RNA sequence: GGGAACGACUCGAGUAGAGUCGAAAAAGCAGGAAGGUGAAGACCAGCGUGAAGGUGGCGUACAUCUGCUCCUGCCAAUCCGCCGUGUAGAAUCCGUGGGUGACGCACUGGUAAAACUCCUCCACGACGUCACGGCUAUAUUCGUAUAGCCGUGACGAAAAGAAACAACAACAACAAC
Reactivity to DMS in 0.01 (KOAc 150mM, MgCl2 10mM, bicine 150mM(pH8.5), 24C), signal-to-noise 1, nucleotides 027 to 126: a120g000c020a020g000g000a090a030g010g020u000g000a300a210g030a260c040c000a000g010c010g000u000g000a070a300g000g000u010g000g080c100g000u020a140c020a000u000c000u000g000c140u000c000c000u000g000c000c080a060a150u000c020c000g000c070c000g040u000g000u020a020g000a170a040u030c040c060g000u030g070g010g000u000g000a070c080g000c020a180c030u000g000g010u020a050a060a060a140c300u020c120c020u000c000c020a070c050g000a300
Reactivity to 2A3 in 0.01 (KOAc 150mM, MgCl2 10mM, bicine 150mM(pH8.5), 24C), signal-to-noise 3, nucleotides 027 to 126: a020g000c010a000g010g000a040a000g050g010u010g040a080a070g110a260c030c030a040g180c000g080u170g300a270a050g010g080u010g010g000c040g020u020a010c010a020u030c000u050g060c060u020c010c000u000g010c000c000a000a010u020c010c020g000c000c000g030u040g010u020a060g010a090a050u030c020c020g010u040g040g000g010u050g040a010c000g000c040a030c080u100g000g040u030a040a050a080a090c050u110c020c000u060c020c000a050c000g060a020

This 177-nucleotide RNA was probed chemically with DMS and 2A3. The 2A3 profile rests on 1,864 reads. For DMS the reverse transcriptase was MarathonRT. The RNA was probed in 150 mM KOAc, 10 mM MgCl2 and 150 mM bicine (pH 8.5) at 24 C. 2A3 adducts were read by reverse transcription with SuperScript II with manganese.